[RMDB]
RNA sequence: GGGAACGACUCGAGUAGAGUCGAAAAGGACAAUCGGUGGCAUGCAUCUACUCCCAGCCUUCCAAACCACAACUAAUUGGCAGAUCACAUCAGAACAUACACCAAUUCUCUCAAUUACCAUAGCUCGUGAUCGCGGGGUCAAACUAGGAACAACAGCAAUUUGGAUAACUUUCGAGUUAUCCAAAUUAAAAGAAACAACAACAACAAC
Reactivity to 2A3 in 0.01 (KOAc 150mM, MgCl2 10mM, bicine 150mM(pH8.5), 24C), signal-to-noise 5, nucleotides 027 to 156: g030g000a020c040a040a080u070c080g040g010u030g020g000c020a020u080g020c010a040u040c030u080a090c050u040c010c020c010a010g010c010c020u070u010c030c010a070a080a070c030c040a050c030a130a060c040u120a050a140u090u040g060g000c030a010g040a060u030c030a020c020a090u090c040a030g040a080a030c020a080u150a030c040a040c050c030a050a080u100u030c040u000c000u010c040a020a160u100u050a090c020c040a060u050a070g030c030u030c080g050u050g040a090u030c010g000c020g010g020g010g000u040c010a020a000a060c030u040a010g050g060a040a040c030a020a020c010a060g110c040
Reactivity to DMS in 0.01 (KOAc 150mM, MgCl2 10mM, bicine 150mM(pH8.5), 24C), signal-to-noise 3, nucleotides 027 to 156: g010g010a090c060a020a080u000c030g020g030u000g020g000c050a090u020g040c030a100u010c030u000a070c060u000c010c020c030a170g000c030c010u000u010c030c020a050a140a090c040c030a040c070a060a100c050u000a040a100u000u000g020g020c030a110g000a100u000c040a060c060a120u000c070a100g020a080a080c060a080u000a080c020a060c060c030a040a080u000u000c040u000c030u000c030a060a100u000u000a070c030c030a080u000a110g010c010u010c050g030u000g000a040u000c040g010c060g000g010g060g000u000c020a050a030a050c050u000a060g000g010a090a070c030a050a070c030a080g020c100
Annotation:
This 207-nucleotide RNA was probed chemically with 2A3 and DMS. For DMS the reverse transcriptase was MarathonRT. Values cover nucleotides 27 to 156.